Structure probing data (DMS and 2A3) for a 177-nucleotide construct. Reactivities are given for positions 27 through 126.
RNA sequence: GGGAACGACUCGAGUAGAGUCGAAAAUGGCGAUGGUGUAUCGGUCGAUGCCCUUGGCGAUCGCCAGGCGCAGCGCCUUGUCGGCGAGGAUCGACCCAGGCGCACCGUUGAGGGUGAAGUGAUACCAGAGGGGGAAUAAUUUCGAUUAUUCCCCCUCAAAAGAAACAACAACAACAAC
Reactivity to DMS in 0.01 (KOAc 150mM, MgCl2 10mM, bicine 150mM(pH8.5), 24C), signal-to-noise 5, nucleotides 027 to 126: u010g020g020c040g020a060u000g000g010u000g020u000a050u000c060g020g020u000c030g020a090u000g010c070c020c010u000u000g010g010c000g010a060u000c140g020c070c080a090g010g000c100g000c080a150g020c040g000c010c000u020u000g000u000c160g000g000c010g000a080g010g000a090u000c020g000a090c030c030c090a100g020g000c040g000c060a010c030c010g040u010u000g020a090g000g020g030u010g000a110a110g010u000g000a110u010a080c050c060a140
Reactivity to 2A3 in 0.01 (KOAc 150mM, MgCl2 10mM, bicine 150mM(pH8.5), 24C), signal-to-noise 2, nucleotides 027 to 126: u120g070g000c050g050a040u040g020g030u070g020u060a040u060c030g030g000u080c040g010a020u070g020c000c020c000u020u010g050g000c020g070a140u120c040g020c030c020a010g040g000c070g000c050a090g090c030g000c050c000u060u090g180u150c030g010g040c020g040a050g040g030a080u070c010g040a140c000c010c000a040g000g040c020g000c020a010c000c010g050u010u060g030a040g020g070g000u060g050a120a030g070u070g080a040u040a120c010c030a050